[RMDB]
RNA sequence: GGGAACGACUCGAGUAGAGUCGAAAAAAGCUGAUUAAAAACAAGGCAGUAGUAAAUGAAGACACCCAAGGAAAUGUGAGCCAGCUCCAAGCUGAAGUGAAGAGGCUCAAAGAACAACUGGCGGAGCGUUGAAUGAAAGUUUCGACUUUCAUUCAACAAAAGAAACAACAACAACAAC
Reactivity to 2A3 in 0.01 (KOAc 150mM, MgCl2 10mM, bicine 150mM(pH8.5), 24C), signal-to-noise 3, nucleotides 027 to 126: a010a000g060c070u070g010a060u120u190a120a120a080a050a070c020a050a060g100g020c010a000g000u060a000g000u020a020a130a170u130g050a050a010g030a010c030a050c030c010c020a010a000g050g020a100a170a020u160g020u040g050a010g010c010c000a020g000c000u000c010c000a060a050g020c060u070g040a080a040g040u080g160a060a080g030a020g120g000c020u020c040a030a050a020g030a020a010c030a010a040c040u040g040g010c040g010g010a010g050c050
Reactivity to DMS in 0.01 (KOAc 150mM, MgCl2 10mM, bicine 150mM(pH8.5), 24C), signal-to-noise 4, nucleotides 027 to 126: a060a120g030c020u000g010a110u000u010a050a060a080a120a110c100a120a110g020g000c020a050g020u020a060g020u000a070a060a090u010g000a140a060g020a150c080a060c010c030c020a090a090g000g000a060a070a050u000g000u000g000a120g010c020c020a070g010c040u000c060c020a040a100g010c050u010g020a060a080g030u000g030a030a070g010a170g010g010c020u000c060a040a050a050g000a060a080c090a040a080c060u000g010g000c060g000g000a070g010c160